[RMDB]
RNA sequence: GGGAACGACUCGAGUAGAGUCGAAAACAUCGACGAACCAUUUCGGAUCAAUCAGGAUACAGUAAGCCCCGCGCUGAAGUCCGAGCAUGUUGGCUGUGGUGGGGAUCGAUGCCGUCAUGUUCAGGAAACUCGUGCAUUAUUUCGAUAAUGCACGAGUAAAAGAAACAACAACAACAAC
Reactivity to 2A3 in 0.01 (KOAc 150mM, MgCl2 10mM, bicine 150mM(pH8.5), 24C), signal-to-noise 2, nucleotides 027 to 126: c010a050u050c000g020a030c050g020a010a030c010c020a030u020u040u070c060g090g010a160u090c040a030a030u060c020a080g020g010a010u050a170c020a030g020u060a070a050g020c030c020c040c060g040c000g000c040u040g030a110a020g110u000c030c010g000a020g030c050a050u120g030u070u050g070g000c010u010g020u060g050g000u020g000g030g000g000a020u020c010g030a020u020g010c010c000g050u050c020a040u070g020u020u020c030a030g000g090a080a090
Reactivity to DMS in 0.01 (KOAc 150mM, MgCl2 10mM, bicine 150mM(pH8.5), 24C), signal-to-noise 3, nucleotides 027 to 126: c030a030u000c060g050a050c090g020a280a160c030c010a050u010u010u000c020g000g010a110u000c040a060a090u010c070a170g010g020a090u000a070c040a050g000u010a140a120g010c010c010c050c040g020c120g000c020u020g000a080a060g020u000c040c030g000a110g030c150a040u000g010u010u010g010g020c020u000g020u010g010g040u000g000g020g010g010a060u000c040g020a070u000g000c040c020g010u000c050a040u000g010u000u000c010a130g030g010a160a120
The record gives the reactivity of an RNA of 177 nucleotides to 2A3 and DMS. 2A3 adducts were read by reverse transcription with SuperScript II with manganese. The RNA was probed in 150 mM KOAc, 10 mM MgCl2 and 150 mM bicine (pH 8.5) at 24 C. For DMS, 2,642 sequencing reads were counted. Reactivities are given for positions 27 through 126.